[RMDB]
RNA sequence: GGGAACGACUCGAGUAGAGUCGAAAACACGUACACGACCUUGUAACUCAGCUGCUUUAUAAGCUAGGGCGAUGUUAUCAAAGUUGGAUGUACUUUGAGCUUGGCAUUUCGUUAAUACUUUUAACGACGUCCACGUCUUAUUCGUAAGACGUGGACGAAAAGAAACAACAACAACAAC
Reactivity to 2A3 in 0.01 (KOAc 150mM, MgCl2 10mM, bicine 150mM(pH8.5), 24C), signal-to-noise 3, nucleotides 027 to 126: c050a010c060g000u010a000c040a000c000g040a030c000c000u050u030g030u000a020a000c000u000c150a030g000c010u120g050c010u130u200u100a160u170a210a000g060c020u040a090g110g060g000c000g000a010u140g020u010u010a170u300c060a050a000a010g010u040u000g130g020a190u010g000u010a000c000u060u050u130g090a050g000c050u050u080g070g000c070a080u090u090u020c000g000u000u040a050a010u150a300c100u110u150u010u050a010a010c000g030a030
Reactivity to DMS in 0.01 (KOAc 150mM, MgCl2 10mM, bicine 150mM(pH8.5), 24C), signal-to-noise 1, nucleotides 027 to 126: c040a210c230g000u000a000c050a000c030g000a030c000c160u000u000g030u000a000a050c020u000c050a290g000c000u000g000c030u000u000u000a220u030a110a170g000c000u000a070g030g000g000c000g000a030u070g020u000u010a000u070c060a000a020a040g100u020u000g010g000a130u030g000u000a000c040u000u010u000g000a090g000c040u000u000g020g020c110a120u010u000u000c000g040u040u000a000a000u020a130c300u010u010u010u010a000a020c080g000a000